RNA sequence: GGGAACGACUCGAGUAGAGUCGAAAAGGUCUGCCGCAUCGCUUUGAAGUUGUGCUGGAGCAUAACGGCGUACGUUGGAUUAACGAUUCGAAAGCGACCAACGUCGGCAGUACGGAAGCGGCGCUGACCACUUCAGUGGGUUCGCCCACUGAAGUGGAAAAGAAACAACAACAACAAC
Reactivity to DMS in 0.01 (KOAc 150mM, MgCl2 10mM, bicine 150mM(pH8.5), 24C), signal-to-noise 3, nucleotides 027 to 126: g010g030u000c000u000g010c030c010g010c120a080u010c020g010c030u010u000u000g020a100a130g030u000u000g030u000g020c010u020g030g020a300g000c000a030u000a020a020c030g000g000c040g000u000a010c020g000u000u000g000g010a180u010u010a070a060c040g010a200u000u000c260g010a090a110a170g010c020g000a130c020c010a020a010c010g010u000c030g000g010c030a050g010u010a040c030g000g010a060a050g020c010g000g000c070g000c060u000g000a210
Reactivity to 2A3 in 0.01 (KOAc 150mM, MgCl2 10mM, bicine 150mM(pH8.5), 24C), signal-to-noise 2, nucleotides 027 to 126: g030g020u010c060u020g000c070c000g020c050a080u180c020g010c080u110u080u220g130a100a090g020u050u040g010u020g030c080u190g160g250a160g000c010a000u000a030a010c030g030g000c020g010u050a020c000g040u020u010g000g030a060u000u170a150a050c030g070a100u070u130c060g140a160a080a080g010c040g030a070c000c000a020a010c010g000u030c010g030g000c000a010g010u040a010c030g060g000a050a000g030c030g050g000c030g000c020u000g000a060